[RMDB]
This 177-nucleotide RNA was probed chemically with 2A3 and DMS.
The DMS profile rests on 20,147 reads.
The reactions ran in a buffer of 150 mM KOAc, 10 mM MgCl2 and 150 mM bicine (pH 8.5), at 24 C.
RNA sequence: GGGAACGACUCGAGUAGAGUCGAAAAGAUAUGGACAACAAUGGCUUUUGACGCUCGUGAUUCGGAAACGAAUCAACGAGCGAUAAGCCAUGUUGUCCUAAGUCAAAGCAAGGCUUCGGCCUUGCAACGUUAUUAGAACGUUCGCGUUCUAAUAACGAAAAGAAACAACAACAACAAC
Reactivity to 2A3 in 0.01 (KOAc 150mM, MgCl2 10mM, bicine 150mM(pH8.5), 24C), signal-to-noise 8, nucleotides 027 to 126: g020a000u050a030u130g000g000a010c010a000a000c050a160a300u020g020g000c040u080u200u240u300g300a250c110g000c000u000c000g010u010g000a010u010u000c000g000g000a030a050a050c010g000a010a010u000c020a040a050c010g000a000g000c000g000a000u000a000a000g010c000c010a000u000g000u000u000g000u000c000c000u000a010a000g000u000c020a020a070a050g000c010a000a000g020g000c000u130u300c300g180g000c000c000u000u000g000c000a000a000
Reactivity to DMS in 0.01 (KOAc 150mM, MgCl2 10mM, bicine 150mM(pH8.5), 24C), signal-to-noise 7, nucleotides 027 to 126: g000a030u000a280u010g000g010a000c010a010a010c010a050a080u000g010g000c000u000u000u010u010g030a260c130g020c000u000c000g040u000g010a020u000u000c000g020g000a070a040a110c000g010a020a000u000c010a050a040c010g010a010g020c000g020a010u010a000a020g010c000c000a000u000g000u000u000g010u000c000c000u000a000a060g010u000c020a100a140a190g010c010a020a020g010g010c010u000u010c290g030g000c000c000u000u000g010c010a020a040